Conditions: 150 mM KOAc, 10 mM MgCl2 and 150 mM bicine (pH 8.5), 24 C.
An RNA of 177 nucleotides, treated with 2A3 and DMS and read out base by base.
RNA sequence: GGGAACGACUCGAGUAGAGUCGAAAAGUAUUGGAGCGGUAGUCACCUCCAUUAGAAUACCUGCAUAUCACGCAAGAGGACGCGAGUCAGCGUCACGGCCGAGCAGCUGAGUGAUAGUGACUAUCGGAUAUAUAUAUAUUUUCGAAUAUAUAUAUAUAAAAGAAACAACAACAACAAC
Reactivity to 2A3 in 0.01 (KOAc 150mM, MgCl2 10mM, bicine 150mM(pH8.5), 24C), signal-to-noise 2, nucleotides 027 to 126: g120u080a150u160u140g030g000a020g070c000g000g020u010a000g000u000c010a010c020c000u020c020c000a020u050u050a020g080a100a110u100a160c030c010u000g010c000a060u040a030u120c030a020c010g050c020a110a080g130a100g130g000a000c000g000c020g020a040g300u300c130a040g040c000g010u000c000a010c010g000g020c010c010g120a060g040c070a000g000c030u050g050a020g030u020g010a020u040a100g000u000g010a010c020u010a020u020c000g020g010
Reactivity to DMS in 0.01 (KOAc 150mM, MgCl2 10mM, bicine 150mM(pH8.5), 24C), signal-to-noise 1, nucleotides 027 to 126: g000u010a090u000u000g000g000a030g000c110g020g020u000a000g000u000c010a000c010c040u000c050c000a050u010u020a080g010a150a120u010a150c100c010u000g000c040a060u020a040u020c090a030c060g010c050a120a070g020a240g000g000a000c010g010c010g000a230g040u040c110a120g030c040g010u000c000a060c000g010g010c010c020g000a100g050c050a150g020c050u000g000a120g000u000g040a010u000a030g000u000g010a010c020u000a000u000c070g020g010